[RMDB]
RNA sequence: GGGAACGACUCGAGUAGAGUCGAAAAGCUAGACCUGGGAACACGACUGGUUGAGCACGAGUUGGGACCCAUUGACAGAGUGGCCAUAGCCGAGCGGCUGAAGCUAAUGAAGGAGAGCUACGCUCAGCUUCUAUCGAAGGUUCGCCUUCGAUAGAAGAAAAGAAACAACAACAACAAC
Reactivity to DMS in 0.01 (KOAc 150mM, MgCl2 10mM, bicine 150mM(pH8.5), 24C), signal-to-noise 4, nucleotides 027 to 126: g010c040u000a090g000a060c040c020u000g000g010g000a090a100c100a080c070g000a100c050u000g010g020u000u010g000a100g010c100a140c080g010a040g010u010u010g000g000g010a170c040c020c030a090u010u000g010a090c120a080g000a080g010u000g010g020c010c040a130u000a060g010c030c070g020a060g000c100g010g000c030u000g000a090a110g010c040u000a050a060u010g020a100a090g010g000a110g000a050g000c030u010a070c120g010c020u000c000a080g000
Reactivity to 2A3 in 0.01 (KOAc 150mM, MgCl2 10mM, bicine 150mM(pH8.5), 24C), signal-to-noise 3, nucleotides 027 to 126: g010c030u040a030g020a070c000c020u040g000g030g050a100a030c070a010c090g090a030c030u020g040g000u100u080g060a030g060c000a000c030g050a050g030u030u040g040g010g070a070c020c010c050a060u060u120g030a050c080a050g080a030g110u080g050g000c030c030a070u120a040g010c010c040g020a050g040c100g030g000c050u060g050a070a000g000c020u060a080a080u180g060a110a030g090g020a140g020a010g000c020u080a030c050g000c010u010c000a010g020